[RMDB]
RNA sequence: GGGAACGACUCGAGUAGAGUCGAAAAACACGAGGAUUCCGCUCAGCCUGAUGCUGGAGGCAAGCACGCUCGCCGAAUGCGCGCAAGCGAUCGAUGCACUGCUUUCGACGCAACCGGAACCGGCGAAGAUUAAUAGUCCUUUCGAGGACUAUUAAUCAAAAGAAACAACAACAACAAC
Reactivity to DMS in 0.01 (KOAc 150mM, MgCl2 10mM, bicine 150mM(pH8.5), 24C), signal-to-noise 9, nucleotides 027 to 126: a110c100a120c110g010a080g010g000a180u000u000c030c020g010c040u000c070a150g010c030c070u010g010a100u010g020c030u000g010g000a060g010g010c050a070a090g010c050a070c060g010c060u000c040g010c000c010g000a130a110u010g010c040g000c080g020c090a130a110g000c010g000a040u000c040g020a100u010g000c060a080c140u010g000c030u000u000u000c010g010a090c050g010c040a070a120c170c020g000g000a070a090c140c020g000g010c020g010a110a100
Reactivity to 2A3 in 0.01 (KOAc 150mM, MgCl2 10mM, bicine 150mM(pH8.5), 24C), signal-to-noise 8, nucleotides 027 to 126: a010c070a010c050g030a050g080g030a200u090u010c020c010g020c030u040c040a030g020c000c030u090g030a080u160g020c020u050g020g040a020g020g010c030a020a030g030c010a010c040g020c010u030c020g010c010c000g080a120a060u120g020c040g000c020g000c050a050a020g000c000g050a120u050c030g040a060u060g030c090a090c280u080g010c010u050u060u030c030g080a090c020g000c020a030a030c020c000g020g020a050a060c030c010g020g000c030g020a090a040
Structure probing data (DMS and 2A3) for a 177-nucleotide construct. DMS adducts were read by reverse transcription with MarathonRT. Reactivities are given for positions 27 through 126. The DMS profile rests on 12,318 reads. Conditions: 150 mM KOAc, 10 mM MgCl2 and 150 mM bicine (pH 8.5), 24 C. Source: RMDB library OK2TST, as collected in RNAgym.